[RMDB]
RNA sequence: GGGAACGACUCGAGUAGAGUCGAAAACUACGCAACACCACACUGGCUGGAGAUGCCUAGCAAGGGCUCUGCAAUUGGAGAAUAUGUGGUCGUGAUUAAUUCGGCACAUUUUCCUUGGAUGCAAUACACUAAGGUGGAACUUCGGUUCCACCUUAGUAAAAGAAACAACAACAACAAC
Reactivity to 2A3 in 0.01 (KOAc 150mM, MgCl2 10mM, bicine 150mM(pH8.5), 24C), signal-to-noise 6, nucleotides 027 to 126: c010u070a030c050g020c040a050a070c050a030c100c000a060c010a020c080u070g060g010c020u010g030g020a120g020a060u190g030c000c010u020a020g060c050a090a140g040g000g000c010u050c020u050g050c040a050a160u090u100g010g010a060g030a050a070u060a080u140g040u070g120g080u060c010g030u060g090a200u110u270a100a080u210u080c000g000g010c000a000c000a000u030u020u010u030c010c000u040u060g050g020a050u060g020c020a060a110u080a130c070
Reactivity to DMS in 0.01 (KOAc 150mM, MgCl2 10mM, bicine 150mM(pH8.5), 24C), signal-to-noise 4, nucleotides 027 to 126: c050u020a040c160g020c090a060a070c020a090c050c020a020c080a120c130u000g000g010c050u000g000g000a100g010a090u030g020c040c020u000a010g000c140a080a080g020g000g000c010u020c040u010g000c010a080a120u040u010g020g010a040g010a090a050u000a040u010g010u010g020g020u020c000g000u030g000a120u070u020a110a160u060u000c000g010g020c010a030c010a010u000u000u000u000c000c020u000u040g010g000a070u040g000c060a070a070u010a100c110

This 177-nucleotide RNA was probed chemically with 2A3 and DMS.